[RMDB]
RNA sequence: GGGAACGACUCGAGUAGAGUCGAAAAGCAGACGUUCGCGUCUGCCUCAGCGGGGUCCACGCGAGGCUUAGACAUGCUCUGAAGCCUCCACGGAGCAACAGCUAAGCUACCCACCGGUGGACGGAGGCACCCAAGGAGCCCAUGUUCGCAUGGGCAACAAGAAUGUAGUAUUCGUACUACAUUCUUGAAAAGAAACAACAACAACAAC
Reactivity to DMS in 0.01 (KOAc 150mM, MgCl2 10mM, bicine 150mM(pH8.5), 24C), signal-to-noise 2, nucleotides 027 to 156: g020c000a010g000a000c010g060u000u000c300g030c030g010u000c000u010g000c000c020u000c060a100g030c000g000g030g030g010u000c000c000a070c030g010c050g030a250g020g040c010u000u000a050g010a070c040a300u000g020c010u000c010u020g030a040a080g040c010c020u000c010c030a080c050g010g000a030g020c000a040a100c090a190g010c010u010a060a100g020c000u000a080c030c000c020a220c050c080g010g020u010g000g000a060c000g020g010a170g010g020c010a090c010c010c010a070a300g010g010a190g020c010c000c020a010u000g000u010u000c200g020c010a020u010g000g000g010c010a030a070
Reactivity to 2A3 in 0.01 (KOAc 150mM, MgCl2 10mM, bicine 150mM(pH8.5), 24C), signal-to-noise 5, nucleotides 027 to 156: g010c010a000g020a000c010g050u100u160c300g050c010g100u030c000u000g010c000c010u040c030a050g040c090g010g100g020g040u050c030c010a030c020g220c040g050a040g030g000c000u010u000a020g020a100c040a080u110g000c000u000c000u020g100a160a060g050c010c020u040c030c010a020c020g000g010a000g000c020a040a110c050a110g070c000u010a020a000g000c020u110a210c020c060c050a080c080c040g080g030u050g020g030a040c070g010g020a040g020g000c020a050c020c010c010a070a110g130g020a040g020c010c000c000a000u010g050u020u080c190g000c120a000u000g000g000g000c000a000a000

The record gives the reactivity of an RNA of 207 nucleotides to DMS and 2A3. The 2A3 profile rests on 7,432 reads. 2A3 adducts were read by reverse transcription with SuperScript II with manganese. Conditions: 150 mM KOAc, 10 mM MgCl2 and 150 mM bicine (pH 8.5), 24 C. It was measured as part of the RMDB library RNAMAK. Values are in units of 0.01, from 0 to 300, in steps of 10. For DMS, 4,935 sequencing reads were counted.